RNA sequence: GGGAACGACUCGAGUAGAGUCGAAAAGACGGUAAGACGGUCGUCCUCACCUUAAGUACAUGGUAGAUUGCAUCCGGAGGACGAGGCAUGCGAAAGGAUGGAAGCAAGGCCAGACCGAAGGUGGAUGGGAAAGCAUGCACGAGUUGCACGAUUGACGGUGGAUAACAAUGUUCGCAUUGUUAUCCACAAAAGAAACAACAACAACAAC
Reactivity to 2A3 in 0.01 (KOAc 150mM, MgCl2 10mM, bicine 150mM(pH8.5), 24C), signal-to-noise 4, nucleotides 027 to 156: g050a000c040g010g080u100a060a000g060a030c020g010g050u030c010g010u000c010c000u000c010a060c010c010u090u100a150a090g070u060a110c050a140u080g040g010u050a080g050a200u070u190g030c050a030u040c010c010g050g000a020g020g000a010c030g020a000g000g000c040a020u060g000c040g090a070a040a020g060g000a010u050g000g040a040a000g070c040a040a020g090g000c030c010a010g030a070c010c070g030a040a000g030g010u050g010g040a060u090g040g000g050a080a050a010g000c010a020u050g010c020a020c040g070a060g020u020u040g030c110a030c080g120a150u050u190g090a070c100g050
Reactivity to DMS in 0.01 (KOAc 150mM, MgCl2 10mM, bicine 150mM(pH8.5), 24C), signal-to-noise 1, nucleotides 027 to 156: g000a060c030g010g020u000a080a110g000a110c040g020g010u000c000g020u020c010c010u000c020a160c090c020u000u020a030a050g010u000a060c020a080u000g030g050u000a080g010a160u000u000g000c050a120u000c050c030g010g020a050g030g000a080c000g020a030g000g000c030a060u000g020c050g020a030a120a090g010g020a120u000g030g000a120a040g040c060a080a100g030g000c020c020a100g000a140c060c000g030a110a040g020g020u000g020g000a150u000g020g000g010a090a120a130g000c030a070u010g000c010a090c040g020a150g000u010u000g020c010a060c000g000a200u010u000g010a170c150g030